[RMDB]
Background
The data come from the RNA Mapping Database (RMDB), library OK2TRN. An RNA of 177 nucleotides, treated with DMS and 2A3 and read out base by base. 2A3 adducts were read by reverse transcription with SuperScript II with manganese. The RNA was probed in 150 mM KOAc, 10 mM MgCl2 and 150 mM bicine (pH 8.5) at 24 C. Values cover nucleotides 27 to 126.
RNA sequence: GGGAACGACUCGAGUAGAGUCGAAAACAAUCACUGGACAGGGUGCACAUCGAUGACGUCGUUCGCGACUACCUGUAUCCGAUCGUGGCGCUCCGAAUUCGCGGGAUCGCACUGCCGGGUCCGCUGCGAAUGUCCUUCUGUUCGCAGAAGGACAUUCAAAAGAAACAACAACAACAAC
Reactivity to DMS in 0.01 (KOAc 150mM, MgCl2 10mM, bicine 150mM(pH8.5), 24C), signal-to-noise 3, nucleotides 027 to 126: c140a100a060u010c130a070c130u000g020g030a100c120a110g000g000g000u010g030c030a060c100a070u010c030g000a070u000g010a120c180g040u000c010g010u010u000c120g070c020g020a080c050u000a100c100c060u000g010u000a110u010c040c020g010a060u000c090g030u000g000g020c030g000c060u000c030c050g020a100a120u000u010c080g000c020g000g000g010a060u000c030g010c070a100c080u010g010c080c020g010g000g000u010c020c020g010c040u020g000c120
Reactivity to 2A3 in 0.01 (KOAc 150mM, MgCl2 10mM, bicine 150mM(pH8.5), 24C), signal-to-noise 3, nucleotides 027 to 126: c010a010a100u110c050a040c130u130g030g030a010c030a060g040g070g000u050g000c030a010c000a110u080c050g140a140u130g040a040c070g040u030c010g030u060u070c110g000c000g090a030c000u070a090c020c010u090g040u100a080u050c050c050g020a020u040c080g040u030g130g050c000g010c030u040c020c030g090a070a140u160u100c060g010c020g100g000g040a040u030c020g010c070a100c300u090g060c070c000g040g000g000u020c000c010g000c010u010g040c010